[RMDB]
RNA sequence: GGGAACGACUCGAGUAGAGUCGAAAAAAACGAUGAGGGUCUAAGGACAUUGUACUCCACUGCUCAGGUGAUGGCCGAACACGGUACGAUUUGUGAAACAGACAUUUCGGGCUGGGAUUGGUCAGUACCUUUCACGGACAUUCGUGUCCGUGAAAGGAAAAGAAACAACAACAACAAC
Reactivity to DMS in 0.01 (KOAc 150mM, MgCl2 10mM, bicine 150mM(pH8.5), 24C), signal-to-noise 1, nucleotides 027 to 126: a130a010a040c060g010a130u020g000a070g010g020g000u000c070u010a100a090g000g000a030c130a060u050u000g000u000a020c090u020c050c010a030c010u000g000c040u070c090a080g000g020u000g020a070u020g090g000c050c010g000a000a110c000a020c050g000g000u000a050c020g010a060u040u000u030g000u000g010a080a100a210c300a210g000a020c000a000u000u020u010c000g040g000g020c010u030g000g000g010a100u040u000g000g020u000c020a050g020u000a040
Reactivity to 2A3 in 0.01 (KOAc 150mM, MgCl2 10mM, bicine 150mM(pH8.5), 24C), signal-to-noise 1, nucleotides 027 to 126: a000a000a000c180g020a160u160g000a040g050g030g020u000c040u070a040a030g100g000a000c000a060u030u110g010u030a050c030u000c000c000a030c030u040g000c000u040c050a040g010g040u050g080a100u000g000g010c000c000g000a000a000c070a000c090g000g030u090a060c030g000a100u000u000u000g090u000g120a140a120a080c010a010g070a020c000a010u000u020u000c000g000g000g000c000u000g000g030g060a080u040u000g000g000u000c000a000g000u110a100